[RMDB]
RNA sequence: GGGAACGACUCGAGUAGAGUCGAAAAACCUUGUGCACCACGAGGCACGCGGAGGCGUCGCCAAGGCCGUAGGCGCCGUGGUACGCAACGCGCUUCUCCGCAGUCAGCACCGAGUCCACCACAGUGACGGUACUCACGUAUUCGUACGUGAGUACCGAAAAGAAACAACAACAACAAC
Reactivity to DMS in 0.01 (KOAc 150mM, MgCl2 10mM, bicine 150mM(pH8.5), 24C), signal-to-noise 3, nucleotides 027 to 126: a080c010c010u000u000g040u000g000c040a060c050c030a170c130g000a100g010g010c240a070c050g000c000g000g030a210g000g000c000g010u000c130g000c020c030a070a050g020g010c030c020g080u030a100g030g030c140g030c020c010g000u000g000g010u000a040c040g000c040a030a050c050g010c000g000c140u000u010c020u010c010c050g010c080a070g020u010c080a060g020c020a030c030c020g000a100g000u000c010c040a070c000c020a120c170a080g010u000g000a190
Reactivity to 2A3 in 0.01 (KOAc 150mM, MgCl2 10mM, bicine 150mM(pH8.5), 24C), signal-to-noise 2, nucleotides 027 to 126: a000c020c000u030u080g050u000g030c040a020c030c010a050c110g030a080g000g050c050a020c070g000c000g000g040a130g220g000c000g000u060c080g010c000c020a050a050g080g000c000c020g220u220a140g090g130c130g000c060c020g000u000g020g000u030a020c070g030c030a030a060c030g000c020g000c000u150u050c020u000c010c020g000c020a030g040u040c040a020g060c000a000c000c040g030a020g010u000c040c040a050c050c000a060c090a050g100u090g150a070
Annotation: Chemical mapping of a 177-nucleotide RNA with DMS and 2A3. The reactions ran in a buffer of 150 mM KOAc, 10 mM MgCl2 and 150 mM bicine (pH 8.5), at 24 C. The data come from the RNA Mapping Database (RMDB), library OK2TRN. 2A3 adducts were read by reverse transcription with SuperScript II with manganese.